Chemical mapping of a 207-nucleotide RNA with 2A3. Reactivities are given for positions 27 through 156. It was measured as part of the RMDB library ARCHII.
RNA sequence: GGGAACGACUCGAGUAGAGUCGAAAAUUAACGUGUCCCGGUUUAACAAUCAAUCGAUCUUCGCGGGUUGCUCGUUGGCAGACAGCGCGAGAAAUCCGUUGUUUCUGUCCGAUGCGGCAAUGUAAUCUGGUCAUGUGACCUCGCCUUGACCGCCAUUUCAAUAGGAAGUCUUCGGACUUCCUAUUGAAAAAGAAACAACAACAACAAC
Reactivity to 2A3 in 0.01 (KOAc 150mM, MgCl2 10mM, bicine 150mM(pH8.5), 24C), signal-to-noise 1, nucleotides 027 to 156: u170u070a100a030c010g050u080g020u020c000c010c060g010g000u210u140u070a080a040c080a060a060u120c100a050a080u110c050g070a050u020c070u110u100c100g010c000g100g000g060u000u110g010c010u000c020g190u130u080g150g000c010a010g050a220c050a100g080c010g040c030g000a000g020a000a030a010u000c020c020g000u000u000g020u000u000u000c000u010g120u000c100c050g080a220u090g030c000g010g000c070a020a000u000g000u020a170a000u100c210u260g000g070u020c040a080u300g300u300g230a000c000c000u010c040g050c030c050u050u110g010a180c000c000g000c000c000a020u030u010